[RMDB]
RNA sequence: GGGAACGACUCGAGUAGAGUCGAAAAGAGUGGGGGUUCCUGAUCGUGGUCAGCGUGCUGACCUUCGUGCUGGCGUUCUUCCUGGACUUCUUCGAGCUGGCGUUCAUCAUCGUGCCGCUGCUCGGCAGCAGCUGACUAAUUUCGAUUAGUCAGCUGCAAAAGAAACAACAACAACAAC
Reactivity to DMS in 0.01 (KOAc 150mM, MgCl2 10mM, bicine 150mM(pH8.5), 24C), signal-to-noise 5, nucleotides 027 to 126: g000a090g020u000g020g010g010g000g020u010u000c020c020u010g000a080u000c080g030u010g000g000u000c020a040g010c040g030u000g030c030u000g000a040c020c020u000u010c050g030u000g020c060u000g000g000c070g000u000u000c040u000u010c020c020u000g010g000a090c110u010u000c050u000u000c040g000a050g000c040u000g010g020c030g010u000u010c040a060u010c140a100u000c160g010u000g000c300c020g010c050u000g000c040u000c020g000g020c120a120
Reactivity to 2A3 in 0.01 (KOAc 150mM, MgCl2 10mM, bicine 150mM(pH8.5), 24C), signal-to-noise 3, nucleotides 027 to 126: g130a020g040u170g010g030g040g000g000u030u020c020c010u040g040a040u080c040g040u050g020g000u020c000a010g010c080g130u130g020c020u000g020a030c000c000u010u040c020g040u040g020c030u040g020g020c020g030u040u030c020u040u020c010c010u040g020g090a080c040u040u010c020u070u090c110g000a000g010c030u060g030g020c000g050u110u070c050a100u070c010a060u100c080g060u040g030c020c040g060c100u040g000c010u040c040g020g000c000a020